Structure probing data (DMS and 2A3) for a 177-nucleotide construct. The RNA was probed in 150 mM KOAc, 10 mM MgCl2 and 150 mM bicine (pH 8.5) at 24 C.
RNA sequence: GGGAACGACUCGAGUAGAGUCGAAAAGCAGUACCGGAAUGGCCACUGCGAACACUUGACUGAUGAAAAAUGGAGUCUUGUGGAUUAGGACGGACUACUACCGGUCGGGCCAGUAGGACGUCCGAAAGGCAAGGAGGAGCUUCGGCUCUUCCUUGCCAAAAGAAACAACAACAACAAC
Reactivity to DMS in 0.01 (KOAc 150mM, MgCl2 10mM, bicine 150mM(pH8.5), 24C), signal-to-noise 5, nucleotides 027 to 126: g010c010a000g010u000a300c000c010g000g040a110a110u060g000g040c110c060a010c000u020g020c000g000a070a120c010a020c010u000u000g000a010c000u010g000a060u000g000a030a110a080a140a090u050g010g010a070g000u000c010u000u000g010u000g000g010a130u010u020a090g000g010a040c020g010g000a060c000u000a010c010u010a120c030c030g010g020u050c260g000g000g000c210c130a020g010u000a000g000g000a030c040g010u010c000c000g000a040a080a090
Reactivity to 2A3 in 0.01 (KOAc 150mM, MgCl2 10mM, bicine 150mM(pH8.5), 24C), signal-to-noise 8, nucleotides 027 to 126: g000c000a000g000u030a040c010c010g080g240a300a160u260g110g020c070c090a010c010u000g000c000g010a050a020c020a000c010u010u020g000a000c010u030g020a030u100g150a110a020a070a070a060u230g120g040a020g000u000c000u010u010g010u010g040g080a190u040u110a050g010g000a000c000g000g030a000c000u010a000c000u000a030c000c020g180g200u230c130g090g030g000c080c000a000g000u000a000g000g000a000c000g010u000c000c000g000a030a020a010
Background: Values cover nucleotides 27 to 126.